Chemical mapping of a 207-nucleotide RNA with 2A3.
The reactions ran in a buffer of 150 mM KOAc, 10 mM MgCl2 and 150 mM bicine (pH 8.5), at 24 C.
Values cover nucleotides 27 to 156.
For 2A3, 1,038 sequencing reads were counted.
As a SHAPE reagent, 2A3 marks flexible, mostly unpaired nucleotides at the ribose 2'-OH.
It was measured as part of the RMDB library ARCHII.
Values are in units of 0.01, from 0 to 300, in steps of 10.
RNA sequence: GGGAACGACUCGAGUAGAGUCGAAAAGCUGCCUAAUAAGCAGUAGCAUAGCUGAUCCUCCGUGCAUCGCCCAUGUGCUACGGAAAGGGUCUCACUUUAAGUGGGCUACACUAAAUAAUCUCCGUCUGGGGUUAGUUAGAAGAGCUUAAUCAGACUACGUGUUUACAACCUUCGGGUUGUAAACACGAAAAGAAACAACAACAACAAC
Reactivity to 2A3 in 0.01 (KOAc 150mM, MgCl2 10mM, bicine 150mM(pH8.5), 24C), signal-to-noise 2, nucleotides 027 to 156: g030c000u020g010c000c000u110a130a040u300a270a010g010c010a000g030u060a000g080c100a160u170a150g030c070u080g010a040u030c000c000u000c000c010g010u000g000c000a000u000c030g010c060c000c000a000u000g000u000g010c030u120a010c000g010g010a090a220a060g020g000g000u060c060u080c100a180c030u170u170u110a070a000g010u010g000g000g030c000u000a000c010a000c000u010a000a010a060u010a010a000u010c000u010c010c090g000u000c010u000g000g030g000g000u000u010a010g020u000u010a000g010a030a000g000a030g010c040u150u210a040a070u040c010a000g010a010c010u020a040